[RMDB]
RNA sequence: GGGAACGACUCGAGUAGAGUCGAAAAUAUCGUUUGUUUUCUACGUCAAAUAAAAUUCCACUUCACAUCAAAUCACCAUUUCGGCUUUGAAGCCGCCGCUUGAUACUGACACUUCGUAGACGUCGUACGUAGAUGCGCAAUUCGUUGCGCAUCUACGAAAAGAAACAACAACAACAAC
Reactivity to 2A3 in 0.01 (KOAc 150mM, MgCl2 10mM, bicine 150mM(pH8.5), 24C), signal-to-noise 3, nucleotides 027 to 126: u150a040u110c070g040u010u040u080g020u000u040u010u000c010u000a020c000g010u000c060a100a090a090u180a070a090a030a000u080u030c000c010a000c040u000u040c020a000c090a010u060c070a080a030a070u130c060a060c100c010a110u070u210u130c080g000g060c050u270u080u300g050a090a030g050c000c000g010c000c010g000c000u010u020g150a000u040a000c000u020g030a000c000a010c060u090u120c040g040u100a090g000a040c000g010u020c040g000u030a000